[RMDB]
The data come from the RNA Mapping Database (RMDB), library TTRDES. This 177-nucleotide RNA was probed chemically with DMS and 2A3. For 2A3 the reverse transcriptase was SuperScript II with manganese. DMS adducts were read by reverse transcription with MarathonRT.

RNA sequence: GGGAACGACUCGAGUAGAGUCGAAAAAAGAUAUGGAUACUUCUCUAGCGUGCGCUUGGAUUUAUAGAGCGCACCAUCGGAAACGAUGGGAUCUCUAUUGUCAGCGUCGGGAGUAUCCUAAGUCAAAUCUUUCAACAUAGUUCGCUAUGUUGAAAGAAAAAGAAACAACAACAACAAC
Reactivity to DMS in 0.01 (KOAc 150mM, MgCl2 10mM, bicine 150mM(pH8.5), 24C), signal-to-noise 4, nucleotides 027 to 126: a100a050g010a040u020a300u000g000g010a020u000a010c010u010u000c000u010c120u010a190g040c300g010u010g020c000g000c000u000u010g040g010a080u010u020u000a010u000a010g010a010g020c180g000c300a210c010c000a010u000c000g010g000a190a130a180c010g000a000u000g000g000g010a160u000c020u000c030u000a030u010u000g000u000c020a050g010c000g030u000c060g000g020g000a030g000u000a010u000c000c000u010a030a100g010u000c030a120a190a140
Reactivity to 2A3 in 0.01 (KOAc 150mM, MgCl2 10mM, bicine 150mM(pH8.5), 24C), signal-to-noise 3, nucleotides 027 to 126: a020a010g070a080u090a050u160g000g010a010u010a010c000u070u020c060u000c120u210a140g190c120g300u230g060c030g010c060u100u230g130g010a010u080u300u110a030u030a030g000a000g000c080g070c100a050c000c010a000u000c000g040g030a090a050a050c020g000a000u000g000g020g040a040u050c000u000c010u030a020u000u040g030u020c000a000g000c000g010u010c020g010g000g020a000g020u000a000u000c000c000u000a140a000g040u010c020a000a100a150